[RMDB]
RNA sequence: GGGAACGACUCGAGUAGAGUCGAAAAUUUGCCCGAGAUGAUUCCUACCACCUUACUACUGACGAAGACACCCAUUCCAGUGGACCACUGUGACCCAGGAGGCAUUCAGCCAUCAUGAUGUGGCCUUUGAGGGGAUAGUAUUCGUACUAUCCCCUCAAAAAGAAACAACAACAACAAC
Reactivity to 2A3 in 0.01 (KOAc 150mM, MgCl2 10mM, bicine 150mM(pH8.5), 24C), signal-to-noise 3, nucleotides 027 to 126: u110u080u170g030c000c000c000g010a030g020a020u150g010a060u110u090c000c000u020a070c000c010a020c000c000u030u080a040c000u010a020c000u050g060a040c040g050a070a010g010a000c020a040c020c000c010a030u050u010c010c010a010g040u080g020g030a060c000c040a010c030u080g010u040g040a070c000c010c020a040g060g090a040g040g000c020a020u100u060c010a040g020c000c000a010u080c060a030u110g070a030u080g030u000g030g030c010c010u030u000
Reactivity to DMS in 0.01 (KOAc 150mM, MgCl2 10mM, bicine 150mM(pH8.5), 24C), signal-to-noise 3, nucleotides 027 to 126: u040u040u010g010c000c000c050g000a110g000a080u010g000a170u010u000c010c000u000a220c080c030a040c010c030u020u020a050c050u000a090c010u010g010a080c080g040a060a080g000a130c010a070c020c010c040a070u000u010c010c010a150g010u000g000g020a100c080c010a020c050u000g000u040g000a100c040c010c030a120g000g000a120g010g020c020a090u020u000c110a100g000c010c030a080u020c080a060u010g000a060u000g000u000g000g010c050c080u000u000